[RMDB]
RNA sequence: GGGAACGACUCGAGUAGAGUCGAAAAUGAUAACACCUUGGUUGUUAGCUACACCAACACUUCUUGCUACACCAGUGGCCCUCUUUCCCCUGACACCCGUUUCAACAGGACUACUAGGGGUACUUUCUCUAAGGUUCGUGAUGCUCUCAAGUUCCGAAUUUACGCUCAUAUUCGUAUGAGCGUAAAUAAAAGAAACAACAACAACAAC
Reactivity to DMS in 0.01 (KOAc 150mM, MgCl2 10mM, bicine 150mM(pH8.5), 24C), signal-to-noise 3, nucleotides 027 to 156: u010g010a130u010a100a110c020a090c010c030u010u010g020g020u020u010g010u000u010a110g020c040u010a100c050a150c040c010a080a130c050a050c050u010u000c050u000u000g010c040u000a110c110a050c020c030a060g030u000g000g010c020c010c010u000c040u000u000u000c030c000c000c040u000g000a110c070a130c020c020c010g020u000u000u010c100a040a140c030a050g020g020a100c040u000a080c040u000a140g020g000g020g020u010a030c060u000u000u000c040u010c020u010a100a120g020g000u000u000c050g040u010g010a100u000g000c020u000c060u010c020a040a150g030u010u000c000c000g010a120
Reactivity to 2A3 in 0.01 (KOAc 150mM, MgCl2 10mM, bicine 150mM(pH8.5), 24C), signal-to-noise 4, nucleotides 027 to 156: u110g040a040u050a100a030c050a040c030c010u030u080g050g000u040u110g030u070u080a020g010c040u070a040c070a080c060c060a190a020c120a050c120u100u120c050u080u070g020c010u030a020c000a020c030c030a050g020u030g040g010c020c010c000u080c010u040u030u010c000c000c000c010u040g020a020c020a060c050c050c010g030u070u090u100c070a100a070c030a050g000g050a020c010u070a040c030u060a090g000g010g020g000u020a050c010u030u100u010c010u000c000u060a070a060g030g000u030u030c010g020u040g040a020u060g030c000u020c010u040c070a090a000g020u050u000c020c000g020a020